[RMDB]
RNA sequence: GGGAACGACUCGAGUAGAGUCGAAAACCGGGCAGCCCCGGCGGGUCGAGCUGGACGCCGACGCGGCCUCCGGCGCCUUCUACGCGCGCUAUCGCGACGGGUACGUCAGCGGGGAGCCGUGGCCCGGCGCGUGGAGGAGGUUCGCCUCCUCCACGCGAAAAGAAACAACAACAACAAC
Reactivity to DMS in 0.01 (KOAc 150mM, MgCl2 10mM, bicine 150mM(pH8.5), 24C), signal-to-noise 1, nucleotides 027 to 126: c000c000g050g030g010c070a160g000c020c020c000c030g010g050c050g000g000g020u000c040g010a260g020c070u010g000g000a030c060g000c000c000g000a180c050g010c000g010g000c090c030u050c020c110g020g010c000g010c000c040u000u060c090u050a130c090g030c110g020c060g000c050u000a180u060c040g060c000g000a010c010g030g000g000u020a150c000g020u000c030a090g010c000g000g090g000g020a090g000c010c000g020u010g000g000c000c050c000g000g020
Reactivity to 2A3 in 0.01 (KOAc 150mM, MgCl2 10mM, bicine 150mM(pH8.5), 24C), signal-to-noise 3, nucleotides 027 to 126: c000c000g010g030g000c100a210g040c000c000c000c020g000g000c030g040g020g080u040c020g020a040g040c040u100g070g050a030c040g000c040c000g000a000c000g000c000g030g000c000c020u110c040c030g050g010c000g010c020c000u160u110c110u130a110c070g080c000g000c010g000c120u090a050u220c040g000c010g000a050c010g040g000g030u240a120c030g020u020c010a020g050c010g020g030g030g010a030g040c000c000g000u020g020g010c000c000c000g010g000